Structure probing data (DMS) for a 177-nucleotide construct. Reactivities are given for positions 27 through 126. DMS adducts were read by reverse transcription with MarathonRT. The data come from the RNA Mapping Database (RMDB), library TTRINS. Conditions: 150 mM KOAc, 10 mM MgCl2 and 150 mM bicine (pH 8.5), 24 C.
RNA sequence: GGGAACGACUCGAGUAGAGUCGAAAAGAUAUGGAGUUGUGUGCGACGAAAUAUAGACAUGCUCGAUUGCCUCGGAAACGAGGUAGAGAGCAACAGCUAUGAUUUCGUCGCACACAACUCCUAAGUCGAAGUUAGACAAGUUCGCUUGUCUAACUUCAAAAGAAACAACAACAACAAC
Reactivity to DMS in 0.01 (KOAc 150mM, MgCl2 10mM, bicine 150mM(pH8.5), 24C), signal-to-noise 3, nucleotides 027 to 126: g000a070u000a300u020g000g000a040g020u000u010g040u000g040u000g010c000g020a020c000g000a010a000a010u000a030u010a000g020a050c120a200u000g010c000u000c000g010a300u010u010g010c000c000u000c000g020g010a080a120a270c020g020a020g020g020u000a010g010a300g000a030g010c000a030a050c300a110g000c000u000a000u010g000a040u000u000u000c010g010u010c020g010c010a000c000a000c000a000a000c010u000c000c010u000a010a050g000u000c080